About this RNA: This 207-nucleotide RNA was probed chemically with 2A3 and DMS. Source: RMDB library RNAMAK, as collected in RNAgym. DMS adducts were read by reverse transcription with MarathonRT. The 2A3 profile rests on 5,373 reads.
RNA sequence: GGGAACGACUCGAGUAGAGUCGAAAACGCUUGUACUUCGGUACAAGCGAAAAAAGAUAUGGAAAUGGUCGUAUUAAGUGCUGGAGUAUCGGAAACGAUACUCAGCUCAAAUACGCCAUUUCCUAAGUCAAAAAAAGGCAAUGUUCGCAUUGCCUAAUAUGAUACACUUCUUCGGAAGUGUAUCAUAAAAAGAAACAACAACAACAAC
Reactivity to 2A3 in 0.01 (KOAc 150mM, MgCl2 10mM, bicine 150mM(pH8.5), 24C), signal-to-noise 5, nucleotides 027 to 156: c000g010c010u000u000g010u000a000c000u040u060c280g090g000u010a010c000a000a000g000c010g000a030a000a000a000a000a000g060a030u060a030u070g000g010a010a000a010u010g010g080u300c060g010u040a020u030u140a300a200g030u060g080c010u080g120g180a050g020u000a000u000c000g010g020a070a030a020c010g000a000u000a000c000u000c000a000g000c000u000c020a180a240a000u000a000c000g000c000c000a000u000u000u000c000c000u000a000a000g000u010c030a000a090a020a070a020a040a040g000g000c010a010a000u020g020u060u120c240g000c120a020u010u000g000c000c000u010a010a000
Reactivity to DMS in 0.01 (KOAc 150mM, MgCl2 10mM, bicine 150mM(pH8.5), 24C), signal-to-noise 1, nucleotides 027 to 156: c010g060c000u000u000g020u000a020c000u010u000c280g080g010u000a000c000a010a000g070c010g000a000a010a080a060a050a060g020a120u000a300u010g000g000a000a000a000u000g000g040u010c030g070u000a000u000u000a100a250g030u000g020c010u030g040g030a070g050u000a000u000c020g000g000a100a070a240c010g030a000u000a010c000u010c000a110g000c000u010c020a130a040a020u000a000c000g000c010c000a010u000u000u010c000c000u000a000a070g010u010c010a000a010a070a050a060a140a090g000g010c000a010a020u000g010u020u000c260g020c040a020u000u000g000c000c010u010a010a050
The RNA was probed in 150 mM KOAc, 10 mM MgCl2 and 150 mM bicine (pH 8.5) at 24 C.